[RMDB]
RNA sequence: GGGAACGACUCGAGUAGAGUCGAAAAGUGGAAGGCGGGGAGACGGGGAUCCCGGGCUUACCCACGGGAACUGCUGGGUUCCCCUGAUGUCCAGUCCCUCCCCGUUCCUGGAGAAGGGAGACUCGGGUAGCAUUGUUCUUCGGAACAAUGAAAAGAAACAACAACAACAAC
Reactivity to DMS in 0.01 (KOAc 150mM, MgCl2 10mM, bicine 150mM(pH8.5), 24C), signal-to-noise 9, nucleotides 027 to 129: g030u050g000g010a060a050g000g020c080g040g030g030g010a050g000a150c180g000g010g020g020a040u030c020c040c050g010g000g020c070u020u010a120c050c030c030a090c270g010g000g050a030a070c120u000g010c070u030g000g000g010u000u000c000c000c000c010u000g010a100u050g030u000c060c070a100g000u010c020c040c020u020c000c000c010c010g010u030u010c040c010u040g000g000a040g000a050a040g000g000g000a030g000a070c040u000c010g000g000g000u040a070g030
Reactivity to 2A3 in 0.01 (KOAc 150mM, MgCl2 10mM, bicine 150mM(pH8.5), 24C), signal-to-noise 9, nucleotides 027 to 129: g120u120g010g020a050a010g040g010c020g010g000g010g000a030g010a020c040g000g000g020g010a010u040c020c020c020g020g020g010c030u050u130a120c000c010c010a030c070g020g000g010a030a040c060u140g050c060u120g110g010g000u020u030c000c000c000c000u030g060a080u100g090u040c030c020a000g030u020c010c000c000u010c000c000c000c000g020u040u040c000c010u030g010g010a040g010a030a030g000g000g000a040g010a010c010u000c000g010g020g010u040a040g040